[RMDB]
RNA sequence: GGGAACGACUCGAGUAGAGUCGAAAAGAUAUGGAUAGGAACUACGACGUGAUGGACGAAGAACACAGAGUGUUCUCGGAAACGAGAACACUCUGUGGGAGUCCUACCACGUCGCCUAUCCUAAGUCGACGAGACAGUAGUUCGCUACUGUCUCGUCAAAAGAAACAACAACAACAAC
Reactivity to 2A3 in 0.01 (KOAc 150mM, MgCl2 10mM, bicine 150mM(pH8.5), 24C), signal-to-noise 1, nucleotides 027 to 126: g030a020u210a020u240g020g010a000u000a020g000g050a240a120c270u300a080c300g010a000c000g000u000g010a020u040g010g000a020c090g240a300a100g060a160a010c010a010c000a000g000a000g050u040g000u020u000c000u000c000g000g000a070a090a050c010g000a010g000a010a020c000a000c000u000c000u010g000u010g000g000g030a000g000u000c000c000u000a030c030c000a000c000g010u000c010g010c000c000u020a000u020c000c010u000a070a040g050u010c040
Reactivity to DMS in 0.01 (KOAc 150mM, MgCl2 10mM, bicine 150mM(pH8.5), 24C), signal-to-noise 1, nucleotides 027 to 126: g000a070u000a300u000g000g000a020u010a000g000g000a150a090c200u010a300c020g000a000c010g020u000g000a100u000g010g010a010c000g000a120a090g000a150a230c030a000c040a010g030a070g000u000g000u010u000c000u010c000g000g010a050a060a270c020g030a020g040a000a020c010a000c000u000c020u000g000u000g000g000g000a110g030u000c020c000u010a070c090c000a020c000g040u000c000g000c020c000u000a010u020c000c030u000a000a070g000u000c040